[RMDB]
Chemical mapping of a 177-nucleotide RNA with DMS and 2A3. It was measured as part of the RMDB library OK1LIB. The 2A3 profile rests on 1,426 reads. Reactivities are rounded to 0.1 and cut off at 0 and 3. The reactions ran in a buffer of 150 mM KOAc, 10 mM MgCl2 and 150 mM bicine (pH 8.5), at 24 C.
RNA sequence: GGGAACGACUCGAGUAGAGUCGAAAAAUUUGGAAUUCGAUUUCCUUCUGGAGAGUGGUGGGGGUUAUCAGGCAAUGAAGUAGUAAGGUGGGUACUAAGGAUUCUGAAACGAUGUGAGAAGGGUGAAAAGCAUCUCUGUAUUCGUACAGAGAUGCUUAAAAGAAACAACAACAACAAC
Reactivity to DMS in 0.01 (KOAc 150mM, MgCl2 10mM, bicine 150mM(pH8.5), 24C), signal-to-noise 3, nucleotides 027 to 126: a080u020u020u020g020g000a040a030u020u000c110g010a170u020u010u000c010c000u000u040c040u000g000g000a110g010a100g010u040g000g010u020g000g030g000g020g010u010u010a040u000c110a110g000g000c200a060a090u050g000a100a090g010u010a070g010u000a050a100g010g020u040g000g000g000u000a040c060u010a060a070g030g000a070u020u010c010u020g020a040a040a110c120g020a070u000g000u000g020a030g000a050a070g000g010g010u010g000a020a060
Reactivity to 2A3 in 0.01 (KOAc 150mM, MgCl2 10mM, bicine 150mM(pH8.5), 24C), signal-to-noise 2, nucleotides 027 to 126: a010u120u100u060g020g050a020a040u090u070c090g170a140u020u090u060c000c000u050u100c040u090g090g040a020g010a030g110u070g020g080u250g000g030g000g000g000u020u000a080u130c030a080g030g000c010a030a090u080g000a080a050g120u200a020g020u070a050a060g070g000u030g010g050g040u000a010c000u020a020a060g060g000a030u080u000c000u060g020a000a030a000c090g030a020u120g070u040g120a020g000a020a090g130g010g000u210g000a050a120